RNA sequence: GGGAACGACUCGAGUAGAGUCGAAAAAGCCAAGCUUUCUAGACCUCUCCAGUGAAUGAGAGGCAGCUGUUCUCACAGGUGGGAAAACAUGGUCACUAAGAGAGAUAUGUGUUAUUUUAAAAAAAUGUUAAUGGAGGCCAAGUGUGGUGACUCACAAAUCGAUAUAGGAGUUCGCUCCUAUAUCGAUAAAAGAAACAACAACAACAAC
Reactivity to DMS in 0.01 (KOAc 150mM, MgCl2 10mM, bicine 150mM(pH8.5), 24C), signal-to-noise 1, nucleotides 027 to 156: a170g030c020c090a090a120g010c050u020u000u000c010u000a230g010a100c010c000u010c030u010c010c080a070g060u050g010a080a140u000g000a070g030a040g000g060c000a010g020c060u020g000u020u010c070u010c040a130c040a170g000g030u030g000g010g000a080a030a050a090c050a060u000g000g000u020c040a080c040u000a090a080g000a160g040a090g040a070u000a030u000g010u000g010u000u000a180u010u000u000u020a010a010a010a100a070a050a070u000g000u000u000a090a120u000g000g010a150g020g020c020c050a060a080g010u000g050u000g010g010u010g020a050c040u000c030a060c080a020a110
Reactivity to 2A3 in 0.01 (KOAc 150mM, MgCl2 10mM, bicine 150mM(pH8.5), 24C), signal-to-noise 2, nucleotides 027 to 156: a000g040c040c000a010a010g020c060u070u150u130c050u150a100g100a300c000c000u030c000u030c040c040a160g060u090g210a170a150u180g000a000g000a000g000g020c000a000g000c000u030g020u030u020c050u010c000a020c020a030g000g080u050g060g000g000a000a130a000a020c040a050u050g000g030u030c020a010c100u090a090a010g020a000g020a000g020a070u030a080u140g050u000g030u050u120a190u120u150u180u270a020a090a000a000a000a040a040u080g000u030u080a120a050u070g010g010a000g000g020c000c000a130a030g060u070g020u020g090g010u010g010a000c010u000c020a040c020a000a160